[RMDB]
An RNA of 177 nucleotides, treated with DMS and 2A3 and read out base by base. 2A3 adducts were read by reverse transcription with SuperScript II with manganese. The reactions ran in a buffer of 150 mM KOAc, 10 mM MgCl2 and 150 mM bicine (pH 8.5), at 24 C. DMS (dimethyl sulfate) methylates the pairing face of unpaired adenines and cytosines. For DMS the reverse transcriptase was MarathonRT. Source: RMDB library OK2TST, as collected in RNAgym. 2A3 is a SHAPE reagent: it acylates the 2'-hydroxyl of flexible nucleotides of all four kinds.
RNA sequence: GGGAACGACUCGAGUAGAGUCGAAAAGUGUCUACUGGAAGUACUGUGAGAUACCUGCUUGCCAGAGUAAGACUGUAAUACCCAAUGUGAUGGUUUACAGGACUGUGAACACUAAGAGUGCGUAGAGCCUCGUAGCGUAGUUCGCUACGCUACGAGGAAAAGAAACAACAACAACAAC
Reactivity to DMS in 0.01 (KOAc 150mM, MgCl2 10mM, bicine 150mM(pH8.5), 24C), signal-to-noise 3, nucleotides 027 to 126: g000u010g030u000c010u000a130c030u000g000g010a070a050g000u000a050c170u010g020u000g000a200g010a130u040a090c070c100u000g000c030u010u000g030c030c010a020g010a150g020u010a180a060g000a170c010u000g000u000a020a020u000a070c030c010c070a110a120u020g030u030g000a130u010g000g000u000u010u000a000c020a020g000g000a140c070u000g020u000g010a090a030c030a030c050u010a070a100g010a080g010u010g020c080g010u000a120g010a140g000
Reactivity to 2A3 in 0.01 (KOAc 150mM, MgCl2 10mM, bicine 150mM(pH8.5), 24C), signal-to-noise 2, nucleotides 027 to 126: g030u000g000u000c030u060a160c040u080g020g010a010a000g010u020a120c120u030g020u050g040a070g040a040u170a090c000c010u020g040c010u020u060g220c030c000a050g010a060g110u080a070a010g010a010c010u000g020u000a020a030u070a170c020c050c000a030a080u280g030u090g070a220u110g010g050u020u010u010a020c000a030g000g090a060c010u070g020u040g100a110a000c000a000c030u050a080a070g070a020g030u100g020c050g070u120a030g020a010g130